[RMDB]
Structure probing data (2A3) for a 207-nucleotide construct. Conditions: 150 mM KOAc, 10 mM MgCl2 and 150 mM bicine (pH 8.5), 24 C. It was measured as part of the RMDB library M2RFPK. Reactivities are given for positions 27 through 156.

RNA sequence: GGGAACGACUCGAGUAGAGUCGAAAAACGUGUCGGCUACGGCCGACGCGAAGAUUUGCAUAUAGUGUAGUAUGCAACUAAAAAUAAAGAAAUACACGUCAAGAACAGUCCGGUACGCCGGACUGAAAAAAGGACUCUUUCUUCGGAAAGAGUCCAAGCCGUUACAUAAGUUCGCUUAUGUAACGGCAAAAGAAACAACAACAACAAC
Reactivity to 2A3 in 0.01 (KOAc 150mM, MgCl2 10mM, bicine 150mM(pH8.5), 24C), signal-to-noise 1, nucleotides 027 to 156: a020c020g000u010g020u010c010g000g030c050u070a050c200g200g030c030c000g000a000c000g000c000g000a050a000g020a080u000u030u010g000c000a000u010a000u000a110g020u010g000u000a000g000u000a000u010g000c000a000a020c060u190a090a060a130a020a020u220a010a100a020g110a020a050a000u010a000c000a000c020g090u110c160a090a020g020a170a020c010a000g000u000c000c000g050g060u110a060c180g090c060c000g050g090a020c000u000g000a000a000a000a000a000a050g000g000a000c020u000c000u000u000u020c000u000u090c120g060g000a000a000a000g000a000g000u000c000c000a000a000